[RMDB]
RNA sequence: GGGAACGACUCGAGUAGAGUCGAAAAGAUAUGGACGACCAUAGACCCACCGAAGAACAGCUUCGGAAACGAAGCUGGGAGGUGCUAUCCCUCGUCCUAAGUCAAAAGUCGCGCUUCGGCGCGACAAGAACCAAGAGAAGUUCGCUUCUCUUGGUUCAAAAGAAACAACAACAACAAC
Reactivity to DMS in 0.01 (KOAc 150mM, MgCl2 10mM, bicine 150mM(pH8.5), 24C), signal-to-noise 3, nucleotides 027 to 126: g000a020u000a120u010g000g010a020c010g030a020c120c100a050u000a040g020a260c270c200c000a020c010c010g000a140a120g010a180a280c020a000g000c000u000u000c000g000g010a030a030a070c000g010a020a000g000c010u000g000g040g010a040g010g030u000g000c080u020a090u010c030c010c020u010c000g010u000c000c000u000a020a160g010u010c010a110a060a170a170g000u000c010g010c000g010c000u000u020c220g030g020c000g000c010g000a010c000a020a090
Reactivity to 2A3 in 0.01 (KOAc 150mM, MgCl2 10mM, bicine 150mM(pH8.5), 24C), signal-to-noise 1, nucleotides 027 to 126: g010a020u030a020u050g000g000a000c010g030a050c090c180a140u120a180g100a120c000c080c040a000c000c030g240a300a050g000a040a000c000a010g010c010u020u000c000g000g000a010a010a000c000g000a000a000g000c000u020g000g000g020a020g000g000u050g000c030u130a210u130c050c000c000u010c000g010u010c000c000u010a030a020g000u000c020a120a060a000a200g040u000c000g020c020g000c050u060u140c300g170g000c000g010c000g000a000c000a000a020